RNA sequence: GGGAACGACUCGAGUAGAGUCGAAAAAGCGGUCUACGGACCGCAAGACUUUGAGUCUUGGCACUGGGAGAAUUCACAGUUGACUUGAUUAUUCUGUGGUUCUGCGGGUGCCAAAACUUAAAAACAAGUCCUUGAUAGAAUUCGUUCUAUCAAGGACAAAAGAAACAACAACAACAAC
Reactivity to 2A3 in 0.01 (KOAc 150mM, MgCl2 10mM, bicine 150mM(pH8.5), 24C), signal-to-noise 9, nucleotides 027 to 126: a000g000c000g000g010u000c010u040a080c280g090g000a000c000c000g000c000a010a010g040a010c050u020u040u040g010a000g000u000c000u000u000g000g000c010a000c020u060g110g090g010a000g000a030a020u300u300c000a010c000a010g040u040u050g100a090c070u110u130g100a110u230u190a120u200u040c000u000g000u000g000g020u010u000c000u100g070c030g110g000g000u000g000c000c000a000a000a000a000c000u000u000a010a000a000a010a010c070a080a040
Reactivity to DMS in 0.01 (KOAc 150mM, MgCl2 10mM, bicine 150mM(pH8.5), 24C), signal-to-noise 2, nucleotides 027 to 126: a090g000c010g000g020u000c000u000a120c210g010g000a000c010c000g020c000a020a000g010a180c100u000u000u010g010a000g010u000c010u010u000g000g010c000a020c000u000g000g010g000a010g010a010a000u010u060c000a020c000a000g000u010u010g010a060c060u030u010g030a180u040u010a070u010u000c000u000g010u000g000g000u000u010c000u000g000c000g000g000g030u000g000c010c010a010a000a000a020c000u000u010a000a040a020a140a090c150a140a140